[RMDB]
RNA sequence: GGGAACGACUCGAGUAGAGUCGAAAACAGGUAGCCCAGACCUUCAAGGCUACGGUGCGUUGCGACGCACGGUCUGAUUCUUCACAACGACGUUCACCGCGUCUUCUUCCAUCCUCCUGGGGCAGUGUAUAACCAGCAGCCUUCGGGCUGCUGGUAACAUAUCUACCUUCUUCGGAAGGUAGAUAUGAAAAGAAACAACAACAACAAC
Reactivity to DMS in 0.01 (KOAc 150mM, MgCl2 10mM, bicine 150mM(pH8.5), 24C), signal-to-noise 3, nucleotides 027 to 156: c040a070g000g010u000a010g000c010c010c190a110g000a080c040c010u010u000c050a100a240g020g010c000u000a020c000g020g030u000g020c030g010u000u010g020c150g020a180c020g000c010a030c010g000g010u000c010u010g010a180u000u000c060u000u000c060a110c110a080a140c040g010a080c020g000u000u010c060a100c050c040g000c020g000u000c020u000u000c030u010u000c040c030a090u000c020c030u010c020c020u000g020g010g020g010c040a090g030u000g020u000a110u000a090a050c000c000a020g000c010a020g030c000c000u010u010c300g000g030g020c010u000g010c010u000g000g000u000a000a070
Reactivity to 2A3 in 0.01 (KOAc 150mM, MgCl2 10mM, bicine 150mM(pH8.5), 24C), signal-to-noise 3, nucleotides 027 to 156: c080a050g060g010u010a000g010c000c010c050a020g030a010c010c000u020u010c010a010a000g000g000c000u010a020c020g000g030u010g000c010g010u030u100g110c200g170a010c000g000c000a000c030g010g000u000c010u000g030a050u080u060c080u130u090c050a040c050a200a070c100g040a010c000g090u160u160c070a040c090c060g010c020g010u000c000u050u000c000u100u040c030c010a060u030c010c020u030c020c030u010g000g010g020g020c020a030g040u020g010u090a070u030a150a030c000c000a000g000c010a000g000c000c000u030u040c180g020g010g000c010u000g010c000u000g000g000u000a000a000